[RMDB]
RNA sequence: GGGAACGACUCGAGUAGAGUCGAAAACAACCAUCGUACGCGAUGGUUGAGACCAGCGUUCGCGCUGGUCACGCACACUCUACGGAGUGUGCGAAGAGCUCCACGUGAGUGGAGCUCAACUUCGAAGCGUGAGCUUCGAAGCGGAUCGCUGAACCCGAAAGGGGCGGGGGACCCAGAAAUGGGGCGAAUCUCUUCCGAAAGGAAGAGUAGGGUUACUCCUUCGACCCGAGCCCGUCAGCUAACCUCGCAAGCGUCCGAAGGAGAAUAGAUGCCAAUUCGUUGGCAUCAAAAGAAACAACAACAACAAC
Reactivity to 2A3 in 0.01 (KOAc 150mM, MgCl2 10mM, bicine 150mM(pH8.5), 24C), signal-to-noise 2, nucleotides 027 to 266: c010a020a000c000c000a000u000c000g030u030a030c260g000c010g130a010u000g010g000u010u000g000a010g000a000c000c000a000g000c020g040u090u140c250g010c010g000c100u000g000g000u010c000a000c000g030c000a000c000a000c010u000c000u020a060c250g100g000a010g000u000g000u010g020c000g000a010a010g000a000g010c000u000c000c010a020c020g060u100g120a090g010u000g010g000a000g000c000u000c000a010a020c000u000u000c000g000a000a010g000c020g040u130g060a040g020c000u000u000c000g000a000a000g040c070g010g010a060u160c120g000c030u030g090a150a060c000c010c000g020a030a010a010g010g000g000g000c020g000g010g000g000g000a020c010c000c010a060g140a090a150a070u270g020g010g000g010c020g000a030a080u060c000u010c000u000u000c010c010g100a100a050a030g000g000a000a000g000a000g000u040a010g000g000g000u000u000a020c000u010c010c000u010u020c010g010a000c000c020c000g000a000g020c000c030c000g120u110c040a000g010c000u000a020a040c000c000u000c000g000c000a000a000g010c000g000u000c010c000g000a000a000g020g000a030g060a070a050u230a160
Reactivity to DMS in 0.01 (KOAc 150mM, MgCl2 10mM, bicine 150mM(pH8.5), 24C), signal-to-noise 1, nucleotides 027 to 266: c000a010a010c000c000a010u000c000g000u010a040c190g060c030g020a000u000g000g030u000u000g000a070g010a010c000c010a000g000c000g040u020u020c110g040c020g010c000u010g000g010u000c000a030c010g040c000a020c000a000c010u000c010u020a110c150g000g000a000g000u020g020u000g040c000g010a080a080g000a070g000c000u020c010c000a010c010g040u030g000a110g030u000g000g020a020g010c000u000c000a050a090c000u000u000c000g000a000a000g030c000g050u040g000a160g010c000u000u010c000g010a000a000g000c180g000g000a030u010c070g030c000u000g000a090a150c010c010c000g000a100a090a180g010g000g020g030c070g030g000g010g000g000a150c280c240c030a300g000a040a080a070u010g010g010g000g030c010g000a060a080u000c000u000c000u000u010c000c000g000a090a080a160g000g000a030a000g000a000g000u000a080g000g000g000u000u010a060c030u010c000c020u000u000c000g010a000c010c000c000g040a150g000c000c020c010g000u000c030a100g000c020u020a130a230c010c000u020c000g000c000a200a040g000c020g020u000c000c000g000a030a030g000g000a080g030a300a120u010a070